The data come from the RNA Mapping Database (RMDB), library RNAMAK. Structure probing data (2A3) for a 207-nucleotide construct. The reactions ran in a buffer of 150 mM KOAc, 10 mM MgCl2 and 150 mM bicine (pH 8.5), at 24 C. For 2A3, 1,437 sequencing reads were counted.
[RMDB]
RNA sequence: GGGAACGACUCGAGUAGAGUCGAAAAAUGCUAUUCGUAGCAUAUGCUGAUAUGGACAUUUGGGAGACGGAUAAGUACCCGACGAUCUCGGAAACGAGGGAGGGUACGUAACGUCGAAGAACAAAUGUCCUAAGUCCUCGUACCCGUUCGCGGGUAACGACCGAGGUGCAUUCGUGCACCUCGGUCGAAAAGAAACAACAACAACAAC
Reactivity to 2A3 in 0.01 (KOAc 150mM, MgCl2 10mM, bicine 150mM(pH8.5), 24C), signal-to-noise 1, nucleotides 027 to 156: a010u000g000c020u010a050u050u180c300g160u120a000g000c000a010u050a080u270g040c000u050g000a100u020a130u270g010g000a000c000a000u000u010u010g010g050g000a070g020a000c000g050g000a010u000a020a010g010u010a000c000c000c010g020a070c030g010a000u000c000u010c000g030g020a090a160a080c020g000a000g000g020g000a000g000g010g000u050a000c000g000u000a020a000c000g020u000c010g000a070a000g000a030a000c000a000a000a000u000g010u000c000c000u000a000a000g000u010c000c000u030c040g090u040a040c030c000c000g020u040u030c170g000c010g040g000g000u010a060a030